[RMDB]
About this RNA:
Structure probing data (DMS and 2A3) for a 177-nucleotide construct. The reactions ran in a buffer of 150 mM KOAc, 10 mM MgCl2 and 150 mM bicine (pH 8.5), at 24 C. It was measured as part of the RMDB library OK1LIB. DMS adducts were read by reverse transcription with MarathonRT. DMS (dimethyl sulfate) methylates the pairing face of unpaired adenines and cytosines. The DMS profile rests on 4,888 reads. Reactivities are given for positions 27 through 126.
RNA sequence: GGGAACGACUCGAGUAGAGUCGAAAAAAGGUUAAACCGGAUGCGCUAUGGGAUAACGGACGCAUGACCUGUAUGCGCUGGAAUUCUGCUACCGAUUUGCCGGUUGUGUUCCGCGUUAUGCCGGACGAGAGUCCGUGAAGUUCGCUUCACGGACUCUAAAAGAAACAACAACAACAAC
Reactivity to DMS in 0.01 (KOAc 150mM, MgCl2 10mM, bicine 150mM(pH8.5), 24C), signal-to-noise 3, nucleotides 027 to 126: a110a050g000g000u000u020a000a050a060c000c020g000g000a130u010g000c010g050c210u010a070u020g000g010g040a040u000a050a150c000g000g010a100c040g020c040a060u000g020a130c200c120u020g010u050a020u000g010c000g000c010u000g010g000a150a030u000u020c030u030g000c050u000a260c030c000g000a140u000u020u030g000c040c000g060g040u000u010g000u000g000u000u010c030c020g000c060g000u050u010a090u040g000c050c010g010g000a020c150g000
Reactivity to 2A3 in 0.01 (KOAc 150mM, MgCl2 10mM, bicine 150mM(pH8.5), 24C), signal-to-noise 4, nucleotides 027 to 126: a000a000g110g000u130u070a090a060a030c020c000g020g010a070u070g020c000g000c070u090a090u160g050g030g040a070u080a100a060c070g020g150a020c030g010c060a040u080g070a110c000c010u030g050u180a030u100g020c000g000c020u020g030g010a020a030u060u070c010u150g030c020u090a050c020c000g050a080u070u060u140g130c040c000g050g000u010u030g010u020g030u030u010c010c010g010c000g020u040u100a100u220g080c120c020g000g010a020c040g060